[RMDB]
RNA sequence: GGGAACGACUCGAGUAGAGUCGAAAAUUUGAGGGGACAUGCCCGGAAGACUGGACCAGCUAUGGAAUCCUGAUUGCACGAAAAGGAGACAAGAUCACCCCAGAUUCCCUGGUGGAAAUAAAGCGUAUAAAAAUACACUCUUCGGAGUGUAUUUUUAAAAAGAAACAACAACAACAAC
Reactivity to 2A3 in 0.01 (KOAc 150mM, MgCl2 10mM, bicine 150mM(pH8.5), 24C), signal-to-noise 2, nucleotides 027 to 126: u140u090u160g080a120g010g000g030g010a010c020a050u070g030c020c000c000g000g010a020a000g040a030c080u080g010g060a040c000c000a020g060c020u110a100u100g040g110a060a020u030c000c000u030g060a100u020u220g060c100a030c060g070a060a050a080a000g030g050a020g020a030c050a040a020g030a060u040c020a110c000c010c000c000a010g030a090u030u050c000c000c000u010g000g080u070g030g050a020a120a010u200a080a120a000g020c030g020u070a060
Reactivity to DMS in 0.01 (KOAc 150mM, MgCl2 10mM, bicine 150mM(pH8.5), 24C), signal-to-noise 7, nucleotides 027 to 126: u030u020u010g020a090g010g010g010g000a080c060a080u020g000c050c030c030g000g000a120a080g000a100c050u000g010g010a080c040c020a050g000c100u040a070u010g010g010a110a110u010c010c010u010g010a160u010u010g010c120a070c130g000a040a070a130a050g010g010a080g000a130c080a060a090g000a090u010c060a070c030c010c000c020a050g010a110u000u000c010c030c010u000g000g010u010g000g010a040a050a080u010a060a070a090g000c120g000u020a150